Chemical mapping of a 177-nucleotide RNA with 2A3 and DMS. 2A3 adducts were read by reverse transcription with SuperScript II with manganese. DMS adducts were read by reverse transcription with MarathonRT. The reactions ran in a buffer of 150 mM KOAc, 10 mM MgCl2 and 150 mM bicine (pH 8.5), at 24 C. The DMS profile rests on 4,117 reads. It was measured as part of the RMDB library RFMREP.
[RMDB]
RNA sequence: GGGAACGACUCGAGUAGAGUCGAAAAAUACAACAAACAAUAAAAGGUGAUGCGAAUGACAAAAAUUUGGUGUACAAGCUGAUUUUUUCUCAGCUUUGUCAUAUGCCGGCAAACGUCUGGUGAAGGACUAUGACAUAGUGUUCGCACUAUGUCAUAGAAAAGAAACAACAACAACAAC
Reactivity to 2A3 in 0.01 (KOAc 150mM, MgCl2 10mM, bicine 150mM(pH8.5), 24C), signal-to-noise 4, nucleotides 027 to 126: a010u050a010c020a060a000c020a020a150a010c030a050a110u180a180a130a020a000g050g000u040g030a030u050g010c040g060a060a070u070g040a060c050a020a130a080a020a070u080u110u220g040g000u070g020u060a050c030a020a010g000c000u000g030a050u060u070u030u040u220u090c060u010c020a000g010c000u050u010u050g000u010c010a000u060a060u210g020c010c030g030g040c040a110a190a050c070g040u050c090u070g010g030u060g060a090a040g050g000a020
Reactivity to DMS in 0.01 (KOAc 150mM, MgCl2 10mM, bicine 150mM(pH8.5), 24C), signal-to-noise 4, nucleotides 027 to 126: a030u000a070c060a060a070c070a080a070a070c100a080a070u020a070a050a090a100g000g030u000g000a070u010g010c090g020a060a020u010g000a050c090a030a040a040a090a120u000u000u010g010g020u000g000u010a040c110a030a040g010c000u000g010a000u000u010u010u010u030u000c210u000c000a020g000c020u000u000u010g020u000c020a070u010a070u010g010c020c050g000g000c080a070a070a060c200g020u000c030u000g020g010u000g010a070a050g000g000a180